The record gives the reactivity of an RNA of 177 nucleotides to 2A3 and DMS. For DMS the reverse transcriptase was MarathonRT. 2A3 adducts were read by reverse transcription with SuperScript II with manganese.

RNA sequence: GGGAACGACUCGAGUAGAGUCGAAAAGAAGGCUAUUAUCGACGUAAAGAAACAAUUUGAGGCUGUUCAUAAACAAUUUGAAUUGGUUCAAAUUUUGAAUGAAAAAGGAGAAAUUGUUAAUCCAGAUCUAACUAUCUUUCUUCGGAAAGAUAGUUAGAAAAGAAACAACAACAACAAC
Reactivity to 2A3 in 0.01 (KOAc 150mM, MgCl2 10mM, bicine 150mM(pH8.5), 24C), signal-to-noise 1, nucleotides 027 to 126: g040a000a040g040g000c060u020a050u120u020a110u160c030g020a020c030g030u110a020a180a000g060a030a110a040c010a010a050u020u040u010g040a030g070g000c020u010g010u000u010c020a000u060a020a100a060c050a060a060u060u000u040g020a010a020u100u100g220g000u230u000c000a000a000a010u020u100u030u140g020a010a030u010g030a000a060a030a000a000g050g000a070g000a000a050a000u000u010g030u010u040a070a050u030c050c020a010g000a130u010
Reactivity to DMS in 0.01 (KOAc 150mM, MgCl2 10mM, bicine 150mM(pH8.5), 24C), signal-to-noise 1, nucleotides 027 to 126: g040a140a140g030g020c050u010a090u000u020a130u000c040g040a100c100g010u000a020a080a120g010a270a080a040c070a030a000u000u000u000g000a120g040g020c030u000g030u000u000c000a010u020a110a100a110c140a010a010u000u000u000g000a040a030u000u000g000g000u020u030c000a000a000a040u040u020u020u000g000a200a080u010g000a020a000a120a050a060g000g000a250g020a030a030a030u000u000g000u010u010a010a200u000c020c030a130g000a150u000
For 2A3, 1,312 sequencing reads were counted.